[RMDB]
RNA sequence: GGGAACGACUCGAGUAGAGUCGAAAAUGUUGGUCGAGGCCCGUCAAACCGCAUCGCGUGCUGAAGAAGCGUUCGUGCUGGCCGACCUCGCCGCAAACCUGUUGCAGCUUGACCAGCGGGCCGAAGCCUUAGACGCGCGAUUCGUCGCGCGUCUAAGAAAAGAAACAACAACAACAAC
Reactivity to DMS in 0.01 (KOAc 150mM, MgCl2 10mM, bicine 150mM(pH8.5), 24C), signal-to-noise 1, nucleotides 027 to 126: u010g060u000u000g000g030u020c000g000a300g000g000c000c000c090g040u000c080a160a130a300c000c080g010c020a030u010c000g020c080g020u000g010c010u020g010a100a190g000a190a020g020c050g020u000u000c030g000u000g050c020u030g060g000c010c010g020a040c050c020u000c030g020c010c030g000c020a050a060a120c180c110u000g000u000u010g030c050a010g020c010u000u000g010a030c040c050a090g000c020g050g000g040c000c010g010a120a070g020c020

The record gives the reactivity of an RNA of 177 nucleotides to DMS. The RNA was probed in 150 mM KOAc, 10 mM MgCl2 and 150 mM bicine (pH 8.5) at 24 C. The DMS profile rests on 725 reads.